Conditions: 150 mM KOAc, 10 mM MgCl2 and 150 mM bicine (pH 8.5), 24 C. This 207-nucleotide RNA was probed chemically with 2A3. 2A3 adducts were read by reverse transcription with SuperScript II with manganese.
RNA sequence: GGGAACGACUCGAGUAGAGUCGAAAACAAUCAACAAUAUGGUUUGUGUAGUUAUGCUGAAAAUCGUUGAGGUUGUAUGGAAUAGGUUAACCGUAAGACCUUAAGUUAAAAAACUUUAAAAUUAAUCAAAAUCAUGUACACUUCGGUGUACAUGAAAGCUGUAUAGUGAGUUCGCUCACUAUACAGCAAAAGAAACAACAACAACAAC
Reactivity to 2A3 in 0.01 (KOAc 150mM, MgCl2 10mM, bicine 150mM(pH8.5), 24C), signal-to-noise 2, nucleotides 027 to 156: c050a040a030u170c040a010a120c030a070a140u180a190u200g040g050u080u120u010g020u080g080u070a160g010u080u140a070u100g040c060u070g050a110a030a010a070u060c020g000u010u040g010a000g010g010u020u030g090u060a080u060g030g020a030a080u020a090g040g000u010u080a060a050c010c000g020u040a110a090g040a010c000c020u000u010a030a030g000u010u040a060a270a040a060a030a030c100u140u100u100a090a140a010a140u110u180a120a030u120c030a040a110a070a140u010c000a000u000g000u010a000c000a000c000u020u000c130g050g000u000g000u000a000c000a000u000g000a000a000a000